The record gives the reactivity of an RNA of 177 nucleotides to DMS.
Values cover nucleotides 27 to 126.
DMS adducts were read by reverse transcription with MarathonRT.
Source: RMDB library TTRINS, as collected in RNAgym.

[RMDB]
RNA sequence: GGGAACGACUCGAGUAGAGUCGAAAAGAUAUGGACCAUUCCGUUAGCAAUGUUAAGGGAGCAAAGUUUAUCGGAAACGAUAGAUUUGCGAAGAACUUAACAUUGCUAACGGAGAUGGUCCUAAGUCGCUUACCGAUAUGUUCGCAUAUCGGUAAGCAAAAGAAACAACAACAACAAC
Reactivity to DMS in 0.01 (KOAc 150mM, MgCl2 10mM, bicine 150mM(pH8.5), 24C), signal-to-noise 1, nucleotides 027 to 126: g020a080u000a300u000g000g010a000c010c000a000u000u010c000c000g020u000u000a000g040c030a010a030u000g000u000u000a000a000g000g000g000a070g020c020a030a010a000g010u000u000u000a000u000c000g040g000a210a060a220c050g050a000u000a000g020a020u000u000u000g000c000g000a150a150g020a150a140c020u000u000a000a020c010a000u000u000g000c000u000a000a020c010g010g000a020g020a020u010g020g020u000c020c010u000a000a110g020u000c050